[RMDB]
RNA sequence: GGGAACGACUCGAGUAGAGUCGAAAAGGCUGGCUCCUGCUUGCAGUCCCAGCUUCCGGAAUGAGAGGGAGAGCGCAGCAUCUGGCUCCACACGAUCAUCCAGUACAUUUCACCACAUUGUCUGCAGCAGUUCGUCGCGAUUCGUCGCGACGAACUGAAAAGAAACAACAACAACAAC
Reactivity to 2A3 in 0.01 (KOAc 150mM, MgCl2 10mM, bicine 150mM(pH8.5), 24C), signal-to-noise 1, nucleotides 027 to 126: g010g000c010u010g000g010c000u000c050c000u040g000c060u000u080g020c000a030g110u150c000c000c000a000g000c000u000u060c040c060g080g040a210a080u140g010a080g000a090g190g040g000a100g070a010g000c240g000c050a040g010c060a110u040c150u100g090g000c000u000c050c000a130c000a060c020g000a000u000c000a000u000c160c000a000g060u000a080c040a090u070u050u030c100a130c090c000a010c020a060u050u050g010u010c000u090g100c010a080g000
Structure probing data (2A3) for a 177-nucleotide construct. For 2A3 the reverse transcriptase was SuperScript II with manganese.